The record gives the reactivity of an RNA of 177 nucleotides to DMS. Reactivities are rounded to 0.1 and cut off at 0 and 3. For DMS the reverse transcriptase was MarathonRT. Reactivities are given for positions 27 through 126. Source: RMDB library OK2TST, as collected in RNAgym. Conditions: 150 mM KOAc, 10 mM MgCl2 and 150 mM bicine (pH 8.5), 24 C.
RNA sequence: GGGAACGACUCGAGUAGAGUCGAAAAGCUCGGCUGAGCCCGGCAGCCUGCGCAAGCGGCUUGGCGGCCACCCGCCGGGUCGCCGGGCUUGACUCUCCCCCAAGGGGAAGAUCGCAGGCCCCGCUCAUAUACUCCGUAUGUUCGCAUACGGAGUAUAAAAAGAAACAACAACAACAAC
Reactivity to DMS in 0.01 (KOAc 150mM, MgCl2 10mM, bicine 150mM(pH8.5), 24C), signal-to-noise 2, nucleotides 027 to 126: g020c020u000c070g010g020c000u000g000a120g000c180c000c000g000g030c010a130g010c020c000u010g050c040g010c300a140a130g020c030g010g000c010u000u010g000g000c100g000g020c060c040a120c100c080c070g010c010c000g010g000g000u000c040g010c000c000g010g010g010c020u000u010g000a100c130u000c020u020c000c000c000c020c080a140a140g000g000g030g000a050a040g000a090u020c130g010c050a090g000g000c010c000c000c020g000c100u000c100a160